Chemical mapping of a 177-nucleotide RNA with 2A3 and DMS.

RNA sequence: GGGAACGACUCGAGUAGAGUCGAAAAAAGGUUGUGAACUAUGCUUGAGGAAGGCGAAGCCAGGGGAAACUCUGGUGGAGGCUUGUCGCAAUGCUGACGUGCAAAUCGCUUGUCUAACUUGAGUAUAUCGUGUAUGUAUCUUCGGAUACAUACACGAAAAAGAAACAACAACAACAAC
Reactivity to 2A3 in 0.01 (KOAc 150mM, MgCl2 10mM, bicine 150mM(pH8.5), 24C), signal-to-noise 2, nucleotides 027 to 126: a000a030g160g000u050u000g040u010g030a090a030c040u010a010u060g020c010u000u040g000a010g020g030a080a030g010g040c010g050a010a010g010c000c010a000g000g000g000g000a020a030a030c020u000c010u020g000g000u050g010g000a020g050g030c000u000u090g020u060c010g000c080a150a170u200g040c130u080g070a050c040g080u090g030c020a000a060a180u080c040g020c070u040u090g020u020c030u000a050a030c000u020u030g010a010g000u000a020u020a000
Reactivity to DMS in 0.01 (KOAc 150mM, MgCl2 10mM, bicine 150mM(pH8.5), 24C), signal-to-noise 2, nucleotides 027 to 126: a050a020g030g010u000u000g030u000g010a100a070c140u010a010u000g030c000u010u000g020a080g000g000a160a090g000g010c030g010a250a300g000c000c000a040g010g000g000g000a140a140a180c000u000c000u000g000g010u010g000g000a300g000g000c030u000u020g030u010c040g000c030a140a070u000g010c080u000g000a080c130g030u000g000c090a040a060a100u000c080g000c070u000u000g000u000c030u000a060a200c050u010u000g010a020g020u000a030u000a080
It was measured as part of the RMDB library RFMREP. High 2A3 reactivity points to a flexible backbone, as in loops and unpaired stretches.